[RMDB]
RNA sequence: GGGAACGACUCGAGUAGAGUCGAAAAGUGCACGACUUCGGUCGUGCACAAAUAAAGGCAGUCGAGUGCGUACGGCACAGUCAUUCGCUGACGCCACGACAAAAAGUAACGUCUUCGGACGUUACAACUCUGCAGAUACGUUCGCGUAUCUGCAGAGAAAAGAAACAACAACAACAAC
Reactivity to DMS in 0.01 (KOAc 150mM, MgCl2 10mM, bicine 150mM(pH8.5), 24C), signal-to-noise 2, nucleotides 027 to 126: g010u000g000c010a010c000g000a030c000u000u030c180g040g000u000c000g010u000g010c000a010c000a020a030a050u010a060a160a150g000g040c110a060g000u010c030g000a080g070u000g010c030g000u000a060c090g060g030c040a130c150a050g010u000c250a130u000u000c070g020c020u000g000a020c020g000c000c020a160c050g090a020c060a040a080a050a110a080g000u010a000a000c000g000u000c000u000u010c140g010g000a000c000g010u000u000a000c010a030a050
Reactivity to 2A3 in 0.01 (KOAc 150mM, MgCl2 10mM, bicine 150mM(pH8.5), 24C), signal-to-noise 3, nucleotides 027 to 126: g010u000g030c010a000c000g000a010c020u060u100c210g030g000u010c000g000u000g020c000a000c000a010a010a000u020a000a010a000g140g020c060a010g000u040c010g040a030g060u250g050c040g000u030a300c020g030g000c030a020c010a030g170u090c050a110u220u170c130g030c030u010g000a000c000g000c020c000a040c040g040a010c060a010a130a010a000a020g000u000a010a000c000g010u000c000u020u070c210g070g020a010c010g000u000u000a010c000a000a010